[RMDB]
RNA sequence: GGGAACGACUCGAGUAGAGUCGAAAACUGCGAUUCGUAACUGCAGGUUGCUCCGGUUGAUCGAUAGAUUGUAAGGUUUGUCGGUCGUUUUAAUCGUGUCUUACAACACGAUGAUGUUACCCCAUAAGAAUUUCCACUAUUUCGAUAGUGGAAAUUCAAAAGAAACAACAACAACAAC
Reactivity to 2A3 in 0.01 (KOAc 150mM, MgCl2 10mM, bicine 150mM(pH8.5), 24C), signal-to-noise 7, nucleotides 027 to 126: c000u030g010c040g100a130u060u180c060g030u090a050a040c030u070g030c050a040g030g040u040u120g010c040u020c020c000g110g020u140u230g010a010u000c000g000a000u000a010g020a010u010u070g110u260a110a100g050g000u010u000u010g000u000c000g000g020u010c020g010u030u080u070u120a030a010u010c000g000u000g010u000c070u080u220a050c050a040a000c000a030c010g010a010u020g010a010u110g040u060u050a100c010c010c000c000a030u050a190a090
Reactivity to DMS in 0.01 (KOAc 150mM, MgCl2 10mM, bicine 150mM(pH8.5), 24C), signal-to-noise 7, nucleotides 027 to 126: c020u000g000c020g020a080u010u010c210g010u010a090a100c090u020g000c030a020g000g010u010u010g010c090u000c010c040g010g000u020u020g000a020u000c010g010a020u000a030g000a030u000u000g000u040a130a120g010g000u000u000u000g020u000c000g010g010u010c010g000u020u010u010u010a110a050u000c000g010u000g010u000c040u000u030a130c300a170a030c010a000c010g010a000u000g000a070u010g000u000u000a120c020c020c030c060a100u020a120a130